[RMDB]
RNA sequence: GGGAACGACUCGAGUAGAGUCGAAAAUAAUAGACAGUUUCACCUGGAGAUUUGCUAUAUUUUUUGAUGUGUGACUAUACAUACACAGAUGUGUACACACACAUAUAUAUAUACAAACAUACAGACAGUAUGUAUUUUCAUAAACAGAACAAUGUUCUCAUUUACACACCUUCGGGUGUGUAAAUGAAAAAGAAACAACAACAACAAC
Reactivity to 2A3 in 0.01 (KOAc 150mM, MgCl2 10mM, bicine 150mM(pH8.5), 24C), signal-to-noise 3, nucleotides 027 to 156: u100a000a040u030a020g100a040c050a030g020u050u000u170c040a080c040c040u000g100g040a090g030a160u120u070u090g030c030u030a040u020a060u030u100u040u010u060u070g200a300u010g050u000g000u000g010a030c050u040a020u010a070c020a010u050a020c030a010c010a270g070a190u020g030u000g000u010a000c020a000c000a000c000a000c000a000u010a010u000a000u000a010u020a000u000a120c000a030a130a000c000a010u040a000c000a020g180a040c020a030g030u000a010u010g010u010a080u010u080u040u050c020a020u140a080a120a140c130a020g080a100a020c050a100a180u250g010u060u040c030
Reactivity to DMS in 0.01 (KOAc 150mM, MgCl2 10mM, bicine 150mM(pH8.5), 24C), signal-to-noise 1, nucleotides 027 to 156: u000a100a160u010a300g000a080c070a130g040u000u010u000c060a090c040c050u020g020g010a220g010a140u000u000u000g020c060u010a080u000a010u000u000u000u040u000u000g020a150u010g000u000g040u000g000a060c130u010a010u000a020c020a050u000a140c100a160c130a140g010a170u000g070u000g000u000a060c120a090c020a020c020a000c000a050u000a040u000a060u010a050u010a060u000a010c010a020a050a040c010a070u010a210c020a080g010a160c060a150g010u000a050u000g010u000a070u000u000u000u000c020a060u000a090a030a080c040a230g010a040a050c000a060a140u000g020u010u000c020